[RMDB]
RNA sequence: GGGAACGACUCGAGUAGAGUCGAAAAGAUAUGGACCGACCACCGGGACGAAGAACUCGGAAACGAGGGAGUCCGUGGCGGUCCUAAGUCGACGCUAUCCGACCUUCUUCGGAAGGUCGGAUAGCAACGGUACAGAUAUGUUCGCAUAUCUGUACCGAAAAGAAACAACAACAACAAC
Reactivity to 2A3 in 0.01 (KOAc 150mM, MgCl2 10mM, bicine 150mM(pH8.5), 24C), signal-to-noise 4, nucleotides 027 to 126: g010a000u050a030u120g010g000a000c010c010g280a300c030c030a020c100c160g300g020g000a000c030g170a280a140g000a090a030c010u000c010g030g030a060a060a040c020g020a000g000g020g020a020g000u000c010c010g010u000g000g000c010g010g000u000c010c000u000a000a000g000u000c020g010a040c090g000c000u010a000u000c000c010g000a000c010c000u010u050c020u070u110c300g090g000a000a000g000g000u000c000g000g000a000u000a000g000c000a000a000
Reactivity to DMS in 0.01 (KOAc 150mM, MgCl2 10mM, bicine 150mM(pH8.5), 24C), signal-to-noise 4, nucleotides 027 to 126: g000a040u000a300u010g010g000a000c010c000g000a140c000c010a000c020c260g070g020g000a020c010g000a120a110g000a110a150c010u000c000g000g000a120a080a190c010g010a020g000g000g000a070g010u000c000c010g010u000g000g010c000g000g010u000c000c000u010a000a040g010u000c010g010a110c190g010c010u000a010u000c000c000g010a010c000c000u000u000c000u000u010c200g030g000a010a010g000g010u000c000g000g000a000u000a000g000c010a000a010